[RMDB]
This 177-nucleotide RNA was probed chemically with 2A3 and DMS. DMS adducts were read by reverse transcription with MarathonRT. The reactions ran in a buffer of 150 mM KOAc, 10 mM MgCl2 and 150 mM bicine (pH 8.5), at 24 C.
RNA sequence: GGGAACGACUCGAGUAGAGUCGAAAAGAGUGAGGCUUAUCCCGGGGUUCGGCUUCCGCCUCCCCCACUGGAGGAUUCCAGGACCCCCGAAAGGGAAGGGGGUGGGCCUUGGACUCUCAGGGAGCCACUGCAUACAUUAGUUCGCUAAUGUAUGCAGAAAAGAAACAACAACAACAAC
Reactivity to 2A3 in 0.01 (KOAc 150mM, MgCl2 10mM, bicine 150mM(pH8.5), 24C), signal-to-noise 2, nucleotides 027 to 126: g130a030g070u130g050a060g000g020c010u080u120a100u170c000c020c020g030g000g000g000u010u030c030g010g020c050u300u020c030c020g040c000c010u030c010c020c000c020c010a060c000u040g010g020a060g160g080a220u270u000c030c010a020g080g070a170c040c060c010c010c020g120a090a040a010g020g010g010a000a080g030g020g010g020g020u030g010g050g000c000c000u060u070g000g020a020c000u030c010u040c180a060g020g000g000a000g000c000c000a010
Reactivity to DMS in 0.01 (KOAc 150mM, MgCl2 10mM, bicine 150mM(pH8.5), 24C), signal-to-noise 3, nucleotides 027 to 126: g010a070g020u010g010a100g020g010c020u000u010a090u010c000c010c020g000g010g000g010u000u010c040g010g000c040u000u010c040c030g010c010c010u000c020c000c020c040c070a080c060u000g010g000a050g000g010a130u010u000c020c020a040g010g000a270c130c060c000c000c010g000a070a100a150g010g020g000a160a110g010g010g010g000g030u000g010g000g000c070c020u000u010g010g000a030c010u000c010u010c060a100g010g010g010a080g020c020c020a250